Structure probing data (2A3) for a 207-nucleotide construct. It was measured as part of the RMDB library M2RFPK. For 2A3 the reverse transcriptase was SuperScript II with manganese. The reactions ran in a buffer of 150 mM KOAc, 10 mM MgCl2 and 150 mM bicine (pH 8.5), at 24 C.
RNA sequence: GGGAACGACUCGAGUAGAGUCGAAAAUUGCGCCUCCGAUUCGCCGUCGGCAUAUCCCCAGCAGCCAUGACCUACCAGGCUGCGGUGCGGCUCGCCGCACAGGUCAUCCCUCAUCGGGCGCGUCCUGGAUAGGGCUAUACUUUCGAGUAUAGCCCAACAUGAACGGUACGUUCGCGUACCGUUCAUGAAAAGAAACAACAACAACAAC
Reactivity to 2A3 in 0.01 (KOAc 150mM, MgCl2 10mM, bicine 150mM(pH8.5), 24C), signal-to-noise 1, nucleotides 027 to 156: u050u030g010c010g030c000c020u000c030c000g070a040u210u120c000g040c220c090g010u020c030g030g040c040a090u150a100u160c020c020c000c000a000g000c000a000g010c030c040a150u070g020a040c000c010u080a300c070c040a010g000g000c000u000g000c000g000g040u030g020c000g000g000c070u070c120g120c010c000g030c000a000c040a040g090g020u050c050a220u070c060c030c010u120c010a120u000c040g000g000g030c020g030c000g040u080c000c000u040g000g010a110u100a120g030g000g040c000u030a000u000a020c010u000u120u210c210g060a020g000u000a010u020a050g000c030c000c000a000a000